[RMDB]
RNA sequence: GGGAACGACUCGAGUAGAGUCGAAAACCCUCUGGGGAAUACACUACAUGACUUACCUGUAUGGUGGCAAGGGCUCGAAGAGGGAUCCCCGGGGAAACCUACUCGAGCGAGGCGGAGAUCGAGCGCCCAGGUAUAGCUAGUUCGCUAGCUAUACCUGAAAAGAAACAACAACAACAAC
Reactivity to 2A3 in 0.01 (KOAc 150mM, MgCl2 10mM, bicine 150mM(pH8.5), 24C), signal-to-noise 2, nucleotides 027 to 126: c020c000c000u000c080u110g000g000g000g020a010a060u170a160c080a030c050u150a020c030a160u190g100a110c050u100u190a120c040c020u110g080u210a130u190g050g070u060g010g020c040a120a120g020g100g080c000u000c020g180a220a130g040a030g050g010g010a020u030c020c000c030c020g000g000g010g040a090a020a000c040c000u010a080c000u020c010g010a000g000c030g020a020g030g000c000g000g050a130g030a180u200c120g020a060g080c000g070c010c080
Reactivity to DMS in 0.01 (KOAc 150mM, MgCl2 10mM, bicine 150mM(pH8.5), 24C), signal-to-noise 1, nucleotides 027 to 126: c060c000c010u020c030u010g040g000g000g000a080a150u000a130c080a060c050u000a110c110a070u000g000a140c060u000u000a060c030c000u000g030u010a070u000g000g000u010g000g010c060a050a100g000g010g040c040u000c050g020a030a020g000a070g000g030g020a110u000c000c000c000c070g000g000g000g000a060a070a110c020c000u000a100c030u000c000g000a010g030c000g010a100g000g010c020g000g000a150g000a120u000c120g000a120g010c030g020c020c030

An RNA of 177 nucleotides, treated with 2A3 and DMS and read out base by base. For DMS the reverse transcriptase was MarathonRT. Conditions: 150 mM KOAc, 10 mM MgCl2 and 150 mM bicine (pH 8.5), 24 C. For 2A3, 1,057 sequencing reads were counted.